[RMDB]
RNA sequence: GGGAACGACUCGAGUAGAGUCGAAAAAGAGAGGCUAAAUGACUUGCCGGAGUUCACAAUAUGGGUCGAUGGCAGAGCCUGAACUUGAACCCAGGCUCACCAGAGUCCAAGUCCCUGGCCUGAACCCUUGCCUCAGAUGUGUCUCUAAGCAAGGCAGCAAGAGUCUAAAGUUCGCUUUAGACUCUUGAAAAGAAACAACAACAACAAC
Reactivity to DMS in 0.01 (KOAc 150mM, MgCl2 10mM, bicine 150mM(pH8.5), 24C), signal-to-noise 2, nucleotides 027 to 156: a100g000a110g000a060g030g000c020u000a020a080a150u000g010a070c010u000u020g020c020c020g030g000a140g020u000u000c020a040c040a060a150u000a200u000g020g000g000u010c030g000a220u000g020g000c000a160g010a080g030c000c010u000g010a030a050c090u000u000g010a060a150c160c080c010a060g000g010c010u000c020a010c010c000a090g020a300g010u010c020c050a090a200g010u000c010c030c040u010g010g000c030c000u020g000a070a070c030c020c040u010u000g020c020c010u000c010a060g000a170u000g020u000g000u000c020u010c010u000a100a140g000c050a040a050g000g030c000a080g000
Reactivity to 2A3 in 0.01 (KOAc 150mM, MgCl2 10mM, bicine 150mM(pH8.5), 24C), signal-to-noise 2, nucleotides 027 to 156: a000g110a000g000a020g000g020c040u070a090a110a060u090g020a050c010u000u020g000c000c010g010g000a020g020u130u070c040a010c020a080a110u150a110u240g020g010g060u140c030g040a060u050g000g060c130a080g010a000g020c010c000u000g020a060a020c040u060u160g040a020a010c030c000c000a010g000g010c010u010c000a040c020c010a020g010a000g070u040c020c010a020a010g020u040c030c010c040u030g020g000c000c000u020g060a120a090c010c020c000u010u030g010c020c020u020c010a000g010a130u040g020u010g020u020c000u020c010u030a010a010g000c000a010a000g050g000c010a000g050